Description: Chemical mapping of a 177-nucleotide RNA with 2A3 and DMS. For 2A3, 2,033 sequencing reads were counted. The RNA was probed in 150 mM KOAc, 10 mM MgCl2 and 150 mM bicine (pH 8.5) at 24 C. High DMS reactivity at an A or C suggests that its Watson-Crick edge is free.

RNA sequence: GGGAACGACUCGAGUAGAGUCGAAAAGACGCGAGAGACGCGAGACGCGCAAUGGCAGAAGCCGCAAUAGAUAAUACGACGCAAGAGGCAAGACGGAGAGCGCGCACCUUGCAUUAAUAACCAAGAACCGUGCUAUAGCAUUCGUGCUAUAGCACGGAAAAGAAACAACAACAACAAC
Reactivity to 2A3 in 0.01 (KOAc 150mM, MgCl2 10mM, bicine 150mM(pH8.5), 24C), signal-to-noise 2, nucleotides 027 to 126: g000a010c040g030c010g070a030g030a010g050a160c020g040c000g050a040g050a010c010g020c010g000c000a000a110u080g090g000c010a000g000a240a010g000c000c010g050c000a050a110u050a090g080a020u070a070a040u120a100c010g000a070c050g000c090a010a030g010a040g150g000c070a060a060g000a000c040g050g010a070g010a010g010c020g000c000g010c000a020c010c000u000u010g020c000a000u150u000a040a090u050a070a010c020c050a010a030g070a110a110
Reactivity to DMS in 0.01 (KOAc 150mM, MgCl2 10mM, bicine 150mM(pH8.5), 24C), signal-to-noise 1, nucleotides 027 to 126: g000a150c040g000c000g040a140g000a040g030a100c050g000c100g000a030g000a010c050g060c040g020c000a050a040u020g070g140c120a050g000a190a040g030c000c070g000c090a020a020u080a090g000a030u020a000a050u000a110c100g000a040c070g000c130a150a110g000a190g000g010c160a010a130g060a090c010g000g000a120g040a110g050c030g000c000g000c040a090c050c000u000u050g000c080a150u000u000a160a050u010a060a150c090c080a190a100g000a150a170